This 170-nucleotide RNA was probed chemically with 2A3 and DMS. High 2A3 reactivity points to a flexible backbone, as in loops and unpaired stretches. Source: RMDB library 15KLIB, as collected in RNAgym. Conditions: 150 mM KOAc, 10 mM MgCl2 and 150 mM bicine (pH 8.5), 24 C. For 2A3, 52,350 sequencing reads were counted.

[RMDB]
RNA sequence: GGGAACGACUCGAGUAGAGUCGAAAACCGGAGGGAUCCAAGAGACGGACGACUUUCCCCUAUUGGUUGGGAAAAGUCCCGGAACCAGGAAAUGGGAAAGAGACGGUAGAAAAGAGCGAGCCUCCCAGCGCUAACACCUUCGGGUGUUAGAAAAGAAACAACAACAACAAC
Reactivity to 2A3 in 0.01 (KOAc 150mM, MgCl2 10mM, bicine 150mM(pH8.5), 24C), signal-to-noise 9, nucleotides 027 to 129: c010c000g010g010a010g040g010g000a050u020c020c030a070a020g030a010g020a040c040g000g020a030c060g010a010c030u010u000u010c010c010c000c010u070a210u160u300g120g030u110u090g020g010g000a040a120a030a020g070u000c010c000c000g010g020a010a030c020c010a010g040g020a010a080a080u140g010g000g010a010a060a010g030a020g000a000c030g020g020u090a030g090a040a080a020a010g050a010g030c050g020a010g010c000c000u020c000c000c000a040g050c050g000
Reactivity to DMS in 0.01 (KOAc 150mM, MgCl2 10mM, bicine 150mM(pH8.5), 24C), signal-to-noise 9, nucleotides 027 to 129: c040c030g050g010a050g000g010g010a100u040c030c030a090a050g000a090g000a080c080g000g000a070c100g010a090c010u000u000u000c020c010c010c050u040a170u030u030g020g020u020u060g030g000g020a010a060a060a070g030u020c010c030c020g000g000a080a070c080c040a100g040g010a030a090a060u040g020g020g000a000a040a050g010a130g000a040c080g000g030u000a050g030a080a040a090a090g030a050g010c050g000a090g020c030c020u000c030c000c010a120g040c110g000